The record gives the reactivity of an RNA of 177 nucleotides to DMS and 2A3.
RNA sequence: GGGAACGACUCGAGUAGAGUCGAAAAGAGUGAGACACUGACACUCUGACACAGUGUGUGAGUCUGACAGUGAGAGUCAGACUCUGACAGUCACUCACACAGUGACAGACAGUCUGAGUCACUGAGAUAUUUCAGCUCUAUUCGUAGAGCUGAAAUAAAAAGAAACAACAACAACAAC
Reactivity to DMS in 0.01 (KOAc 150mM, MgCl2 10mM, bicine 150mM(pH8.5), 24C), signal-to-noise 9, nucleotides 027 to 126: g000a070g020u010g010a070g010a130c130a120c040u000g010a080c020a080c150u000c020u000g010a100c060a090c300a070g010u010g020u000g010u000g000a020g010u000c050u000g000a010c000a070g030u010g000a080g000a070g010u010c110a080g010a300c010u000c010u000g010a120c040a030g010u000c050a140c010u000c010a050c080a100c020a020g010u000g010a040c000a040g000a080c180a160g010u000c040u000g010a130g000u000c010a030c010u000g000a160g010a150
Reactivity to 2A3 in 0.01 (KOAc 150mM, MgCl2 10mM, bicine 150mM(pH8.5), 24C), signal-to-noise 5, nucleotides 027 to 126: g090a010g020u040g030a050g020a020c050a000c080u010g020a010c010a010c050u050c020u000g050a010c020a010c010a140g100u020g000u010g020u030g070a010g010u000c060u070g010a010c010a040g070u100g230a160g030a010g060u030c070a010g030a170c000u010c000u000g010a000c000a010g020u010c010a010c010u010c000a010c000a000c000a000g000u000g010a010c000a010g060a020c040a040g060u010c030u060g070a040g050u010c010a000c040u030g030a040g050a100